[RMDB]
RNA sequence: GGGAACGACUCGAGUAGAGUCGAAAAUCGUCGUAGGGAUUGAUGUUAGGAACCGAACCCCUAGGGAUCAAGCUGAUCACGCGAUCGCGAGUAAUGAUCUGGCAAAGGUCUUGCGUGAUAAGGUGCUCUUCACCAUCGAAAGAGCGGUAGUCCGAAGUAUAUGAUAGGGAUUCGUCCCUAUCAUAUAAAAAGAAACAACAACAACAAC
Reactivity to DMS in 0.01 (KOAc 150mM, MgCl2 10mM, bicine 150mM(pH8.5), 24C), signal-to-noise 5, nucleotides 027 to 156: u000c040g020u000c040g020u000a070g010g030g020a080u010u000g010a060u000g020u010u000a170g030g010a090a080c040c030g010a040a130c030c010c010c030u010a140g020g010g000a050u000c020a050a240g020c040u000g000a040u000c010a040c030g000c030g010a070u010c050g020c080g000a160g020u000a090a110u010g000a070u000c040u000g040g030c090a060a110a100g010g010u000c020u000u000g020c060g030u000g000a040u010a050a090g010g010u000g000c020u000c020u000u000c030a110c030c090a120u000c080g010a100a030a080g000a040g030c000g010g000u000a090g010u010c000c010g020a080a150g010
Reactivity to 2A3 in 0.01 (KOAc 150mM, MgCl2 10mM, bicine 150mM(pH8.5), 24C), signal-to-noise 6, nucleotides 027 to 156: u070c020g050u020c030g010u040a050g050g030g030a070u050u100g040a060u120g050u100u150a060g050g030a020a030c030c010g010a040a040c020c010c010c040u040a040g000g030g020a020u060c030a030a020g030c040u030g010a020u020c000a010c020g000c010g040a070u110c040g010c030g060a040g040u130a080a140u170g060a040u020c010u050g100g000c110a120a110a100g000g000u000c000u050u140g000c000g000u010g020a010u010a080a050g050g010u080g010c020u010c010u050u040c030a080c130c040a090u110c070g090a140a040a030g020a010g010c040g000g030u060a050g040u010c020c020g020a040a010g080